An RNA of 177 nucleotides, treated with DMS and 2A3 and read out base by base. For DMS, 5,626 sequencing reads were counted. The RNA was probed in 150 mM KOAc, 10 mM MgCl2 and 150 mM bicine (pH 8.5) at 24 C.
[RMDB]
RNA sequence: GGGAACGACUCGAGUAGAGUCGAAAAAAAUACACCAUGAUCGCUGUUAGUAUCCUUUGUCAUGGAAUGGGAAGCGGAAGGUAUGGGCGACUAACCACUGCCCUGUCCGCGAAACCGAGGGUCAGGGCACGACUCAGCUGUUCGCAGCUGAGUCGUGAAAAGAAACAACAACAACAAC
Reactivity to DMS in 0.01 (KOAc 150mM, MgCl2 10mM, bicine 150mM(pH8.5), 24C), signal-to-noise 4, nucleotides 027 to 126: a020a070a060u010a080c150a190c000c000a050u010g010a000u010c120g010c030u000g000u000u020a100g010u000a050u010c020c020u020u010u010g020u000c070a040u010g000g000a080a110u000g010g000g030a120a170g000c020g000g010a080a060g030g010u020a050u010g010g000g030c000g000a000c080u030a100a080c160c200a180c110u000g000c010c000c000u010g010u000c000c000g020c000g000a020a080a140c030c030g000a100g010g000g000u000c040a040g000g010g050
Reactivity to 2A3 in 0.01 (KOAc 150mM, MgCl2 10mM, bicine 150mM(pH8.5), 24C), signal-to-noise 4, nucleotides 027 to 126: a000a000a000u290a030c140a040c010c020a030u060g010a030u100c030g000c150u070g070u190u090a060g050u100a160u120c020c000u090u100u150g040u070c050a080u050g030g000a040a070u120g020g050g000a040a020g000c010g000g000a040a000g120g020u250a130u240g040g010g000c020g010a020c020u090a050a040c050c020a080c080u050g000c000c000c000u000g020u000c020c010g040c000g040a140a030a020c090c030g020a060g010g080g000u060c040a020g000g010g030